The record gives the reactivity of an RNA of 207 nucleotides to 2A3. The RNA was probed in 150 mM KOAc, 10 mM MgCl2 and 150 mM bicine (pH 8.5) at 24 C. For 2A3 the reverse transcriptase was SuperScript II with manganese.

[RMDB]
RNA sequence: GGGAACGACUCGAGUAGAGUCGAAAACUAACUCGACUGAAAUGGUUGAUGGUAUGAACCAAAAAUUUUAUGCAGUCACUCACAACAUCGACUUAACUAAACAGCAAACACAAGCUAUCUUGACUUUGCAAGACGCUUUUGGGCAAACCGAUGCAGCGGUGAAGGAAUUGUUCGCAAUUCCUUCACCAAAAGAAACAACAACAACAAC
Reactivity to 2A3 in 0.01 (KOAc 150mM, MgCl2 10mM, bicine 150mM(pH8.5), 24C), signal-to-noise 2, nucleotides 027 to 156: c000u010a010a060c020u020c090g020a010c000u010g010a030a010a160u100g060g000u000u030g000a080u050g000g040u080a090u270g090a070a070c000c000a000a000a030a050a120u240u220u130u100a110u210g040c010a000g010u020c010a050c100u090c000a100c050a070a150c000a040u060c040g060a030c030u090u100a150a010c020u080a080a080a090c050a010g020c020a040a060a030c000a020c010a140a010g000c000u040a030u040c010u020u100g050a180c090u190u150u110g000c040a010a000g000a010c030g020c000u070u000u010u060g020g040g000c030a050a060a000c030c010g100a050u200g040c020a010g130c080